[RMDB]
RNA sequence: GGGAACGACUCGAGUAGAGUCGAAAAGGAGCCAUGGGAUGCUCCUCCCGAUGCUCGAUCCCUUCCCUCCCCCCAAGCGUCGCCCAGGAAUGGCGGGACCCCACUCCACAGGGUCCGCGUUCCAUCCCCUAUGAUAACUCUUCGGAGUUAUCAUAGGAAAAGAAACAACAACAACAAC
Reactivity to 2A3 in 0.01 (KOAc 150mM, MgCl2 10mM, bicine 150mM(pH8.5), 24C), signal-to-noise 3, nucleotides 027 to 126: g030g000a000g000c020c060a110u160g040g030g000a010u080g020c030u020c020c000u040c000c000c010g050a160u180g040c060u050c140g090a080u030c040c010c000u020u070c010c030c000u030c000c010c000c010c000c000a010a000g010c010g050u060c010g050c020c000c010a030g070g070a060a020u070g300g300c020g030g060g030a060c000c010c000c010a100c030u050c020c020a050c020a040g000g020g010u020c010c000g010c010g000u020u050c000c000a020u040c010c000
Reactivity to DMS in 0.01 (KOAc 150mM, MgCl2 10mM, bicine 150mM(pH8.5), 24C), signal-to-noise 3, nucleotides 027 to 126: g000g000a020g040c030c140a120u000g010g000g010a170u010g030c040u000c030c010u000c020c010c010g010a120u010g020c140u020c110g000a070u000c020c000c020u000u000c010c000c000u000c020c000c000c010c000c030a060a070g000c050g020u000c040g020c010c010c020a120g030g000a040a010u000g010g000c000g030g020g000a020c010c000c000c040a130c080u000c070c090a040c100a180g010g000g000u000c010c000g000c010g000u000u000c000c010a160u010c100c070
The record gives the reactivity of an RNA of 177 nucleotides to 2A3 and DMS. The data come from the RNA Mapping Database (RMDB), library VIROID. The RNA was probed in 150 mM KOAc, 10 mM MgCl2 and 150 mM bicine (pH 8.5) at 24 C. DMS adducts were read by reverse transcription with MarathonRT.